[RMDB]
Source: RMDB libraries RFM100 and RFMREP, as collected in RNAgym. The record gives the reactivity of an RNA of 177 nucleotides to 2A3 and DMS. For 2A3 the reverse transcriptase was SuperScript II with manganese.

RNA sequence: GGGAACGACUCGAGUAGAGUCGAAAAAGCAUCGCAUACGUGCGAUGCAAGAAAUGAUGAGCUUGGCCGCUACCCGAUCGAUGAGGGUUAAACUCCGGUGCUGAUCAGCUCCUGUACGCAGGAGCAAGUGAUAGCAGUGAUUCGUCACUGCUAUCACAAAAGAAACAACAACAACAAC
Reactivity to 2A3 in 0.01 (KOAc 150mM, MgCl2 10mM, bicine 150mM(pH8.5), 24C), signal-to-noise 9, nucleotides 027 to 126: a010g000c000a000u000c010g000c010a010u020a050c280g050u010g010c000g000a000u000g000c000a000a010g060a010a110a020u200g020a030u070g020a000g020c040u060u080g080g020c010c010g000c030u040a070c000c010c000g030a090u120c060g080a090u120g070a110g040g020g030u050u100a060a110a020c040u030c030c020g020g020u060g020c020u040g030a080u060c030a010g010c000u010c000c000u010g030u040a020c250g010c100a000g000g000a010g000c000a020a010
Reactivity to DMS in 0.01 (KOAc 150mM, MgCl2 10mM, bicine 150mM(pH8.5), 24C), signal-to-noise 4, nucleotides 027 to 126: a150g010c010a000u000c000g040c000a050u010a120c230g030u010g030c000g010a000u010g010c010a020a030g000a070a050a100u030g000a040u000g000a130g010c040u010u010g030g000c020c040g020c140u000a040c020c000c010g000a150u020c150g000a170u030g010a180g000g000g010u020u000a020a080a140c120u000c040c010g000g010u010g000c050u000g000a050u010c060a110g000c000u000c000c000u000g020u010a070c160g030c000a000g000g000a040g010c000a010a040